[RMDB]
RNA sequence: GGGAACGACUCGAGUAGAGUCGAAAACAAGUUCGUGCUUGCGACUUACACGUAGGGCGAGGGGUGGGCGAAAGUUGCAAUGAGACCGUAACUUUCGUAGUCAUUGAUAAAGGGGCAGGUCUCGCUCAAAAGACGUUGGUCUUCGGACCAACGUCAAGUUGACGUAUUUGUUCGCAAAUACGUCAACAAAAGAAACAACAACAACAAC
Reactivity to 2A3 in 0.01 (KOAc 150mM, MgCl2 10mM, bicine 150mM(pH8.5), 24C), signal-to-noise 3, nucleotides 027 to 156: c010a020a040g020u040u080c020g020u050g110c050u070u130g050c040g110a140c090u030u110a040c060a040c060g060u080a110g030g010g040c140g090a190g010g020g000g070u280g030g000g000c020g000a000a010a000g000u010u000g000c050a030a170u200g000a030g000a010c000c000g000u000a010a000c000u010u010u010c020g000u000a030g080u050c060a140u010u270g080a060u140a080a070a040g010g000g010g000c050a020g010g000u010c000u000c040g010c010u120c000a060a140a000a100g000a000c010g000u000u010g000g000u000c010u020u010c180g040g000a000c000c000a000a000c000g000u020c000a000a000
Chemical mapping of a 207-nucleotide RNA with 2A3. The 2A3 profile rests on 1,975 reads. For 2A3 the reverse transcriptase was SuperScript II with manganese. Conditions: 150 mM KOAc, 10 mM MgCl2 and 150 mM bicine (pH 8.5), 24 C.